The data come from the RNA Mapping Database (RMDB), library M2PK50. Chemical mapping of a 177-nucleotide RNA with DMS and 2A3. DMS (dimethyl sulfate) methylates the pairing face of unpaired adenines and cytosines. The DMS profile rests on 902 reads. For DMS the reverse transcriptase was MarathonRT. The 2A3 profile rests on 1,373 reads. Reactivities are given for positions 27 through 126. 2A3 adducts were read by reverse transcription with SuperScript II with manganese.
RNA sequence: GGGAACGACUCGAGUAGAGUCGAAAAUCCGUUGUCUUCGGACAACGGAAAAGAAGCGCGGACACAAAAGCACGAGCUCGCCGUGACGCGCAAAGGCGAUAAAAAGCUCAAACUUCGGUUUGAGCAACAUUACGAACGACUUCGGUCGUUCGUAAUGAAAAGAAACAACAACAACAAC
Reactivity to DMS in 0.01 (KOAc 150mM, MgCl2 10mM, bicine 150mM(pH8.5), 24C), signal-to-noise 2, nucleotides 027 to 126: u000c000c010g040u000u020g020u000c030u000u030c160g000g000a010c000a010a010c000g000g000a000a000a100a070g000a120a080g000c030g020c000g030g020a240c100a070c140a060a170a100a120g000c000a140c100g010a090g010c130u000c000g040c080c070g000u000g000a110c010g030c040g030c020a040a070a060g000g020c050g000a120u000a090a070a080a150a120g000c000u000c000a000a000a010c000u000u030c210g020g010u000u000u000g000a000g020c000a020a040
Reactivity to 2A3 in 0.01 (KOAc 150mM, MgCl2 10mM, bicine 150mM(pH8.5), 24C), signal-to-noise 1, nucleotides 027 to 126: u010c000c000g000u010u010g000u030c010u000u070c150g100g000a000c000a000a000c010g010g000a030a060a000a000g030a160a040g010c000g030c010g050g120a110c070a010c000a200a120a000a000g070c020a020c130g060a060g090c000u000c040g030c010c020g000u030g020a000c000g000c010g030c020a020a030a000g030g000c020g010a020u170a090a160a020a010a010g010c000u040c010a020a000a000c000u010u050c100g070g010u000u000u000g010a000g000c000a000a020